[RMDB]
RNA sequence: GGGAACGACUCGAGUAGAGUCGAAAAGAUAUGGAUCACUCUUUUGACGCUCCGAGUUUCGGAAACGAAACGAGGAGCGAUAAGAGUAUCCUAAGUCAAAACUCGUAUACCUUCGGGUAUACGAGAACGUUAGUAUACUGUUCGCAGUAUACUAACGAAAAGAAACAACAACAACAAC
Reactivity to 2A3 in 0.01 (KOAc 150mM, MgCl2 10mM, bicine 150mM(pH8.5), 24C), signal-to-noise 7, nucleotides 027 to 126: g020a020u070a030u170g000g000a010u040c110a030c020u000c000u070u080u090u200g250a130c050g000c010u000c000c000g010a030g010u000u010u010c010g010g030a060a080a050c010g000a010a000a000c000g010a020g000g000a000g000c010g000a000u000a000a000g000a000g010u000a000u000c000c000u010a170a020g050u020c030a000a020a070a240c000u000c000g000u000a000u000a000c000c000u030u100c300g190g000g000u010a000u000a000c010g000a000g000a000a000
Reactivity to DMS in 0.01 (KOAc 150mM, MgCl2 10mM, bicine 150mM(pH8.5), 24C), signal-to-noise 8, nucleotides 027 to 126: g000a030u000a300u010g000g000a010u000c150a010c000u000c000u000u000u000u010g020a210c100g030c000u000c000c000g000a300g000u000u000u000c000g010g000a080a080a170c000g000a000a010a000c000g000a300g000g000a010g020c000g010a000u000a010a010g000a010g010u000a030u000c000c000u010a030a150g000u000c030a090a060a120a090c000u000c000g000u000a010u000a000c000c000u000u010c180g020g010g010u000a000u000a000c000g000a000g000a030a050
Chemical mapping of a 177-nucleotide RNA with 2A3 and DMS. The RNA was probed in 150 mM KOAc, 10 mM MgCl2 and 150 mM bicine (pH 8.5) at 24 C.